[RMDB]
RNA sequence: GGGAACGACUCGAGUAGAGUCGAAAAGGGGCUGACAGGAAUCGACAGUAGAGUGUAUCAUGUCAGUCAGCAUGCCGGGGAAUGGUGGUUUACCCCGUUAUCAAAUGAUUACCGACCAAUAAUUGGCUUAGCUCGUUGGGCUUCGGCCCAACGAGAAGUGGUCACGAUAGUUCGCUAUCGUGACCACAAAAGAAACAACAACAACAAC
Reactivity to 2A3 in 0.01 (KOAc 150mM, MgCl2 10mM, bicine 150mM(pH8.5), 24C), signal-to-noise 1, nucleotides 027 to 156: g120g010g000g030c000u000g000a000c040a030g010g070a050a080u130c150g130a140c090a060g140u300a070g120a040g100u220g050u000a090u060c020a010u020g010u000c000a000g000u000c000a000g120c000a000u160g070c070c050g000g010g000g000a130a000u090g020g010u010g000g070u000u010u080a040c050c000c010c000g090u080u000a000u040c040a010a010a010u040g040a010u080u060a040c000c000g060a070c050c020a050a090u160a210a160u150u040g120g100c050u070u160a040g040c000u020c000g000u000u000g010g000g000c000u010u040c040g100g000c000c000c000a000a000c000g000a000g000a000a000